[RMDB]
RNA sequence: GGGAACGACUCGAGUAGAGUCGAAAACUAAUAUUCACUAAUAGAUACCACAAAAGGUGUUAGUUCAUUAAGACAGCAGGACGGUGGCCAUGGAAGUCGGCAUCCGCUAAGGAGUGUGUAACAACUCCUAGUUCUUUGGCUUCGGCCAAAGAACUAGAAAAGAAACAACAACAACAAC
Reactivity to 2A3 in 0.01 (KOAc 150mM, MgCl2 10mM, bicine 150mM(pH8.5), 24C), signal-to-noise 2, nucleotides 027 to 126: c000u000a000a120u060a120u090u140c030a010c090u010a000a050u040a130g120a110u090a120c080c010a090c110a040a140a000a140g000g010u030g010u010u020a010g010u000u010c060a070u070u160a080a050g080a130c040a010g010c020a020g000g170a000c010g030g130u060g060g000c060c000a010u060g080g020a020a100g000u040c000g030g000c010a050u070c050c010g020c040u010a000a030g110g000a060g000u060g000u010g050u120a180a000c050a030a020c020u000c000
Reactivity to DMS in 0.01 (KOAc 150mM, MgCl2 10mM, bicine 150mM(pH8.5), 24C), signal-to-noise 2, nucleotides 027 to 126: c030u010a090a070u070a060u050u000c070a020c110u000a060a100u050a050g030a020u020a020c010c000a080c110a120a070a120a050g070g000u000g010u020u000a050g000u000u000c100a100u030u030a060a080g010a050c060a050g030c070a090g000g000a030c070g000g020u000g020g030c080c020a010u000g010g000a070a020g010u000c030g000g000c060a070u000c010c020g030c050u000a060a030g000g000a010g000u000g000u030g020u030a020a080c160a140a020c000u000c010

An RNA of 177 nucleotides, treated with 2A3 and DMS and read out base by base. The reactions ran in a buffer of 150 mM KOAc, 10 mM MgCl2 and 150 mM bicine (pH 8.5), at 24 C. For 2A3, 744 sequencing reads were counted. The data come from the RNA Mapping Database (RMDB), library RFM100.